RNA sequence: GGGAACGACUCGAGUAGAGUCGAAAAACUAUCCUUGCUCAUUCAGGAACUAGCUGAAUGGUCACCAGAAUUGUUUGCGAAAUUACCUGAAUUUUCUUACCAUCACAAGCACUUCGAUUACUUGUGGGAGGUCAGAUACCUUCGGGUAUCUGACCUCAAAAGAAACAACAACAACAAC
Reactivity to 2A3 in 0.01 (KOAc 150mM, MgCl2 10mM, bicine 150mM(pH8.5), 24C), signal-to-noise 1, nucleotides 027 to 126: a000c120u120a070u050c000c010u020u050g000c000u000c010a030u000u000c000a000g050g000a060a060c030u000a100g130c000u000g000a070a000u000g010g010u050c000a130c050c000a090g300a280a140u300u240g000u110u000u090g030c060g000a020a060a110u130u090a210c010c000u000g130a000a010u180u040u020u020c220u010u000a060c100c000a100u190c000a000c000a090a000g000c040a000c100u220u150c100g250a190u000u180a000c000u000u000g000u000g000g020